[RMDB]
RNA sequence: GGGAACGACUCGAGUAGAGUCGAAAACGCGCGAACGUACGCGCGAACGCGCGAAAAAGCGCAUGCGCGAAAAAGGCCGGAAAGCCGGCCAGCGCGUUCGCGCGCAUGCGCCGCGUACGGAAGCGCGGCGGAUUUAUUUGUUCGCAAAUAAAUCCGCAAAAGAAACAACAACAACAAC
Reactivity to 2A3 in 0.01 (KOAc 150mM, MgCl2 10mM, bicine 150mM(pH8.5), 24C), signal-to-noise 3, nucleotides 027 to 126: c000g010c000g010c000g070a110a010c000g020u010a010c000g000c000g000c000g000a010a010c020g000c000g000c020g060a150a060a020a060a010g010c020g000c000a010u040g030c040g000c020g260a060a020a000a020a060g020g000c000c010g020g030a300a160a100g300c000c000g000g000c000c000a000g000c000g000c000g000u010u010c080g020c000g000c000g000c040a000u030g010c000g000c000c020g000c010g000u000a000c000g000g020a070a010g000c000g000c000g000
Reactivity to DMS in 0.01 (KOAc 150mM, MgCl2 10mM, bicine 150mM(pH8.5), 24C), signal-to-noise 1, nucleotides 027 to 126: c010g020c000g000c010g020a110a300c000g060u000a050c010g000c000g000c120g060a030a010c070g000c000g000c000g010a090a070a070a070a060g000c000g000c020a000u000g010c010g010c000g000a140a060a070a100a100g000g000c000c000g010g000a070a080a130g010c020c000g000g030c010c030a030g000c030g020c000g010u000u000c110g010c010g070c030g010c010a000u010g010c000g030c010c000g000c000g010u000a010c030g000g000a190a230g000c000g010c020g000